[RMDB]
RNA sequence: GGGAACGACUCGAGUAGAGUCGAAAACAGGCCUUAGAGGAUACAUACGAGCCCAGUACGUUGGGCCACGAACUGGUGAGGGAUCUAGUCUCAGUUAUCAGGGCUCGUAAUUAUGUCGAAGCGACCAGGAUUUGUACCUUUUCGAAGGUACAAAUCCAAAAGAAACAACAACAACAAC
Reactivity to DMS in 0.01 (KOAc 150mM, MgCl2 10mM, bicine 150mM(pH8.5), 24C), signal-to-noise 2, nucleotides 027 to 126: c110a040g010g030c040c000u010u010a030g010a090g000g010a050u010a000c140a010u010a000c010g000a100g010c030c000c030a140g000u000a090c140g000u020u010g000g000g010c000c040a080c110g010a050a190c050u030g000g000u000g030a140g000g040g000a050u040c050u000a300g030u000c000u010c000a070g000u020u010a090u030c080a100g000g010g020c020u010c050g000u000a050a020u000u010a020u020g000u000c000g000a130a110g010c120g000a080c040c030a220
Reactivity to 2A3 in 0.01 (KOAc 150mM, MgCl2 10mM, bicine 150mM(pH8.5), 24C), signal-to-noise 5, nucleotides 027 to 126: c020a030g070g060c020c010u070u090a060g030a060g200g050a050u060a070c100a020u040a010c040g000a000g000c010c000c000a030g060u070a030c080g000u060u090g020g010g020c000c000a020c050g030a060a020c030u070g110g030u130g170a130g000g070g020a070u060c070u210a020g080u050c000u010c050a080g040u060u080a080u190c100a060g000g000g010c010u000c000g000u000a000a020u090u090a030u110g140u020c050g030a070a010g050c030g040a030c010c030a030